RNA sequence: GGGAACGACUCGAGUAGAGUCGAAAACUGCUUCUGUUGCACAUGCAGCGGGCCUCAUCAGUCCAUCUCCUCGGUGACCCUAACCAAAUCCCUGCUAUUGACUUUGAGCACGCCGGCCUUGUGCCAGACUCGUUCACCUAUUCGUAGGUGAACGAGUAAAAGAAACAACAACAACAAC
Reactivity to DMS in 0.01 (KOAc 150mM, MgCl2 10mM, bicine 150mM(pH8.5), 24C), signal-to-noise 2, nucleotides 027 to 126: c040u010g000c070u000u010c030u020g020u000u020g000c060a110c100a070u000g020c070a070g030c060g010g000g000c050c030u000c100a050u000c140a070g030u000c050c070a100u000c020u000c020c010u010c060g030g030u010g000a190c060c030c030u000a060a090c080c070a010a090a100u000c020c010c000u010g030c050u000a080u010u010g010a070c060u010u010u020g020a140g010c050a070c080g000c040c010g010g020c040c010u010u000g050u010g020c000c050a080g010
Reactivity to 2A3 in 0.01 (KOAc 150mM, MgCl2 10mM, bicine 150mM(pH8.5), 24C), signal-to-noise 2, nucleotides 027 to 126: c030u040g000c000u030u010c020u020g120u120u130g000c050a050c040a190u060g020c030a020g010c000g030g040g000c000c010u070c020a100u030c000a020g080u000c040c000a080u020c050u000c010c020u020c040g020g020u020g020a090c000c020c000u050a010a080c000c040a040a030a120u080c000c000c020u030g060c030u040a110u140u120g070a090c000u030u040u120g050a050g020c050a020c080g030c050c010g070g010c000c000u070u060g000u080g000c010c010a010g000
The data come from the RNA Mapping Database (RMDB), library OK2TRN. The record gives the reactivity of an RNA of 177 nucleotides to DMS and 2A3. For 2A3, 1,821 sequencing reads were counted. Reactivities are given for positions 27 through 126.